The record gives the reactivity of an RNA of 177 nucleotides to DMS and 2A3. Values are in units of 0.01, from 0 to 300, in steps of 10.

RNA sequence: GGGAACGACUCGAGUAGAGUCGAAAACUGCUCUCGUUCGCGAGAGCAGAAAUAAUAAACCCUAGAAAACGAUCAAAACUAGCGAAAUACAUAACGAUCGAAAAAGAAGUCACUUCGGUGACUUCAAGAUGAUUAUUGUGUUCGCACAAUAAUCAUCAAAAGAAACAACAACAACAAC
Reactivity to DMS in 0.01 (KOAc 150mM, MgCl2 10mM, bicine 150mM(pH8.5), 24C), signal-to-noise 4, nucleotides 027 to 126: c000u000g000c000u000c000u000c010g010u000u010c190g020c010g010a000g010a020g010c000a000g000a000a020a070u000a110a110u010a100a130a170c010c000c010u000a080g010a100a050a100a150c030g010a020u000c010a080a080a070a110c090u000a050g000c140g000a080a090a090u000a080c120a090u010a080a150c170g000a010u000c000g010a060a060a060a100a150g000a010a000g000u000c000a010c000u000u020c140g030g020u000g000a010c000u000u000c000a040a060
Reactivity to 2A3 in 0.01 (KOAc 150mM, MgCl2 10mM, bicine 150mM(pH8.5), 24C), signal-to-noise 5, nucleotides 027 to 126: c000u010g010c000u020c010u010c000g030u040u030c130g010c000g080a000g000a000g000c000a000g000a000a000a000u010a000a000u070a060a160a090c020c000c000u020a040g130a040a100a010a040c010g000a010u010c030a040a060a040a140c050u070a030g070c030g190a080a100a040u180a080c060a040u130a100a060c070g000a010u030c000g020a070a030a010a000a000g010a000a010g000u000c000a000c010u020u090c170g070g010u020g000a000c000u010u000c000a000a000

DMS adducts were read by reverse transcription with MarathonRT.